Notes: Chemical mapping of a 177-nucleotide RNA with 2A3 and DMS. DMS adducts were read by reverse transcription with MarathonRT. The RNA was probed in 150 mM KOAc, 10 mM MgCl2 and 150 mM bicine (pH 8.5) at 24 C. Values cover nucleotides 27 to 126.

RNA sequence: GGGAACGACUCGAGUAGAGUCGAAAACAGGAGCUGUGGAUGUUAUCGUCAUAGACUCUGUAGCUGCUUUGGUUCCUAAAAGUGAACUCGAAGGCGAUAUUGGCGAUGUACAUGUAGGAUUACAAGACCUAUCACUGGCUUUCGAGCCAGUGAUAGGAAAAGAAACAACAACAACAAC
Reactivity to 2A3 in 0.01 (KOAc 150mM, MgCl2 10mM, bicine 150mM(pH8.5), 24C), signal-to-noise 2, nucleotides 027 to 126: c080a050g030g070a120g060c030u060g010u060g160g000a030u020g020u030u050a060u070c050g090u000c030a020u030a090g050a150c020u020c070u120g040u050a020g030c060u220g040c040u060u000u040g050g020u000u000c000c000u030a160a060a000a040g160u190g050a020a020c030u010c170g020a000a000g070g000c050g030a030u000a100u110u090g010g010c010g010a020u010g040u070a000c000a020u070g060u120a030g000g140a060u040u090a040c010a060a000g030a090
Reactivity to DMS in 0.01 (KOAc 150mM, MgCl2 10mM, bicine 150mM(pH8.5), 24C), signal-to-noise 2, nucleotides 027 to 126: c090a080g000g000a040g020c000u000g020u000g010g010a070u010g010u000u000a030u010c020g030u000c030a080u010a100g000a060c080u000c090u010g010u000a070g020c030u010g010c040u000u000u000g010g000u000u000c010c040u000a070a060a080a070g010u010g010a020a060c040u000c050g010a050a060g010g000c030g000a110u000a040u010u000g040g020c060g010a070u000g000u000a030c110a040u000g010u000a080g000g000a130u000u000a060c180a080a140g020a210